[RMDB]
RNA sequence: GGGAACGACUCGAGUAGAGUCGAAAAUGCCAUUAACGAUGUCUAGAGCUAGGCCUUCUACAACAGCGGUCUUACCAACACCUGGCUCACCGAUAAGAACUGGGUUGUUCUUGGUACGACGUGAGAGCAGAAGACAUAGUUUCGACUAUGUCUUCUGAAAAGAAACAACAACAACAAC
Reactivity to DMS in 0.01 (KOAc 150mM, MgCl2 10mM, bicine 150mM(pH8.5), 24C), signal-to-noise 9, nucleotides 027 to 126: u010g020c040c020a130u000u010a080a110c120g010a060u000g010u000c060u000a070g010a090g010c050u000a070g010g000c040c070u000u010c030u000a070c110a060a100c140a120g000c090g010g000u000c010u000u000a040c010c010a040a040c060a040c020c020u000g010g010c020u000c010a060c120c100g000a130u010a090a060g000a020a020c010u000g000g000g010u000u010g010u000u010c140u000u000g000g010u000a030c090g000a060c040g010u000g000a110g010a140g010
Reactivity to 2A3 in 0.01 (KOAc 150mM, MgCl2 10mM, bicine 150mM(pH8.5), 24C), signal-to-noise 5, nucleotides 027 to 126: u080g020c010c010a050u130u100a080a050c080g040a060u090g040u050c040u070a060g010a040g130c040u030a030g060g000c010c030u080u040c030u090a090c020a150a020c020a050g170c030g090g070u020c000u010u010a010c000c000a020a010c010a010c010c010u000g010g010c010u000c010a020c040c070g140a090u070a180a070g000a020a010c010u020g000g090g000u070u090g040u110u050c040u020u030g020g010u030a030c030g010a010c030g040u090g040a110g040a010g060
An RNA of 177 nucleotides, treated with DMS and 2A3 and read out base by base. 2A3 adducts were read by reverse transcription with SuperScript II with manganese. DMS adducts were read by reverse transcription with MarathonRT. The DMS profile rests on 21,118 reads.